[RMDB]
RNA sequence: GGGAACGACUCGAGUAGAGUCGAAAAACGAUACUGAUACGUCAGUAUCGAGUUCGUUUCCUCGCUUGCACCCGUCCGGGUGGGCUAUGACCAUAAGGUAAGGGAAACAUCCAUUCACAAGAGGCAAGAAGGCGACGUGAUUCGUCACGUCGCCUUCAAAAGAAACAACAACAACAAC
Reactivity to 2A3 in 0.01 (KOAc 150mM, MgCl2 10mM, bicine 150mM(pH8.5), 24C), signal-to-noise 1, nucleotides 027 to 126: a000c010g000a010u060a000c000u010g000a000u020a050c190g110u060c000a000g040u000a000u000c000g000a000g000u070u010c000g000u000u000u000c000c000u020c000g000c040u070u300g160c000a000c000c000c030g140u230c110c050g000g040g000u020g000g000g000c000u110a170u280g150a120c000c030a060u110a290a000g020g000u050a040a040g000g000g090a030a000a000c000a070u000c060c060a040u000u100c060a060c000a240a000g020a010g100g030c000a010a010